[RMDB]
Structure probing data (2A3 and DMS) for a 207-nucleotide construct.
DMS adducts were read by reverse transcription with MarathonRT.
Reactivities are given for positions 27 through 156.
The DMS profile rests on 2,688 reads.
For 2A3 the reverse transcriptase was SuperScript II with manganese.
Conditions: 150 mM KOAc, 10 mM MgCl2 and 150 mM bicine (pH 8.5), 24 C.
It was measured as part of the RMDB library OK3TST.
For 2A3, 1,888 sequencing reads were counted.
RNA sequence: GGGAACGACUCGAGUAGAGUCGAAAAUAUCACGACAUGUCGCUGUGUCACAUCUAUAGGUGUAACGUCAGCAUCGACAACCUGAUUCUGGACGAACGUUCGAGCGUGAAGCUAUCAUGUCGCACGCUCGCAGAUGCAGGUACCGAACGCGUGCCGCGAGGGUCUGAAUUUUCGAAUUCAGACCCUCAAAAGAAACAACAACAACAAC
Reactivity to 2A3 in 0.01 (KOAc 150mM, MgCl2 10mM, bicine 150mM(pH8.5), 24C), signal-to-noise 3, nucleotides 027 to 156: u240a020u040c020a010c030g050a030c030a040u100g000u080c070g030c000u020g000u020g010u020c020a010c000a030u060c070u150a230u170a220g000g010u020g020u020a030a020c030g090u050c100a010g000c010a090u110c050g040a020c040a070a020c000c000u040g000a100u070u050c000u010g020g130a030c030g070a170a050c020g050u070u070c000g020a030g030c000g000u010g000a090a020g010c050u100a190u300c020a050u150g060u100c020g010c020a000c000g020c000u040c000g000c010a010g010a020u120g060c000a020g000g000u030a000c030c020g030a090a050c050g030c010g020u020g040c060c040g000c020
Reactivity to DMS in 0.01 (KOAc 150mM, MgCl2 10mM, bicine 150mM(pH8.5), 24C), signal-to-noise 1, nucleotides 027 to 156: u000a140u010c030a110c030g020a030c020a090u000g000u000c080g060c020u000g050u000g020u010c010a040c040a030u010c020u000a160u000a150g060g090u050g010u010a000a020c140g000u000c010a050g000c070a300u010c050g000a070c050a060a070c000c000u000g010a190u000u000c010u010g000g030a300c140g020a060a010c040g000u010u010c000g050a050g040c010g050u000g000a030a080g010c140u000a170u010c130a030u000g030u000c070g000c010a060c010g010c000u000c000g000c020a070g010a050u000g020c000a010g000g050u000a110c040c010g020a110a100c080g030c020g000u000g000c000c010g010c050